An RNA of 177 nucleotides, treated with DMS and 2A3 and read out base by base.
DMS adducts were read by reverse transcription with MarathonRT.
High 2A3 reactivity points to a flexible backbone, as in loops and unpaired stretches.
The RNA was probed in 150 mM KOAc, 10 mM MgCl2 and 150 mM bicine (pH 8.5) at 24 C.
For 2A3, 4,370 sequencing reads were counted.
RNA sequence: GGGAACGACUCGAGUAGAGUCGAAAAUGCAUUUUCUGGCGGUGUGCUGCAUAACCGAUUGCUACGUGAAUUACUCAGCGAACAAUUGCAGGAUUUCCAGCUAUUGAUGCCCCAGCGCCUGCCAGCCUCGUGUCAAUUGUUUCGACAAUUGACACGAAAAAGAAACAACAACAACAAC
Reactivity to DMS in 0.01 (KOAc 150mM, MgCl2 10mM, bicine 150mM(pH8.5), 24C), signal-to-noise 4, nucleotides 027 to 126: u010g010c060a120u010u010u000u010c020u010g000g010c010g030g020u010g020u010g010c020u000g020c050a040u000a180a120c120c040g000a040u000u000g000c010u000a100c190g010u020g010a030a050u010u020a080c080u000c100a140g020c070g010a070a130c240a100a110u010u000g030c070a050g010g000a090u000u000u000c010c030a080g000c020u010a110u010u000g000a040u000g010c100c050c090c190a070g010c020g020c010c010u030g020c010c010a040g000c300c110
Reactivity to 2A3 in 0.01 (KOAc 150mM, MgCl2 10mM, bicine 150mM(pH8.5), 24C), signal-to-noise 3, nucleotides 027 to 126: u020g000c010a030u040u030u070u140c010u000g010g000c010g000g020u160g010u010g150c020u010g000c000a030u040a070a050c010c010g020a020u010u040g020c010u040a090c080g140u160g090a010a010u020u050a110c020u040c130a030g030c040g080a110a120c070a190a180u140u110g000c030a000g000g050a020u050u020u020c010c010a000g000c000u020a020u040u030g020a030u110g050c000c020c010c010a000g000c000g010c000c010u050g000c000c000a010g010c000c010